[RMDB]
RNA sequence: GGGAACGACUCGAGUAGAGUCGAAAAACAUAUCAACCAAUAGCAUUAACCCAUUUUAUUUCCUGUCCUUAGUGUCUGAAGAUGCUCACCAGUUUUCUGUGUACAGUAAGGCAGCAUGCUAAAAUGCUUUUGUUCAGUUCUGUAUAUUUGAAAAUAAACUCACUACGAUAUUCGUAUCGUAGUGAGUAAAAGAAACAACAACAACAAC
Reactivity to DMS in 0.01 (KOAc 150mM, MgCl2 10mM, bicine 150mM(pH8.5), 24C), signal-to-noise 2, nucleotides 027 to 156: a050c100a160u010a120u020c060a120a160c040c050a080a110u010a070g000c030a060u000u000a110a160c030c030c020a170u000u000u000u000a080u020u010u000c030c030u000g020u000c040c020u010u000a070g020u000g040u000c020u000g010a070a080g010a120u000g020c040u000c090a120c180c050a110g020u000u000u010u000c020u000g000u000g060u000a050c020a010g040u010a080a120g000g000c040a050g000c060a040u010g010c050u000a040a110a090a040u000g000c010u000u000u000u000g010u010u000c090a120g010u000u000c040u000g010u000a030u000a070u000u010u010g000a010a030a050a080u010a080a090
Reactivity to 2A3 in 0.01 (KOAc 150mM, MgCl2 10mM, bicine 150mM(pH8.5), 24C), signal-to-noise 5, nucleotides 027 to 156: a010c060a050u230a040u160c070a040a060c030c010a040a110u050a070g010c020a040u060u110a060a110c030c010c030a060u070u110u120u150a160u090u090u080c030c010u070g160u210c030c010u040u050a060g050u020g040u050c030u030g060a090a040g010a040u030g000c010u050c080a110c070c030a040g030u140u010u050u000c020u010g050u000g020u080a000c000a060g060u030a010a020g030g000c010a010g030c010a020u070g030c030u120a030a120a080a000u030g010c000u060u100u090u080g020u060u080c040a090g020u070u020c020u050g060u060a050u020a070u190u160u160g060a080a050a020a020u230a140a060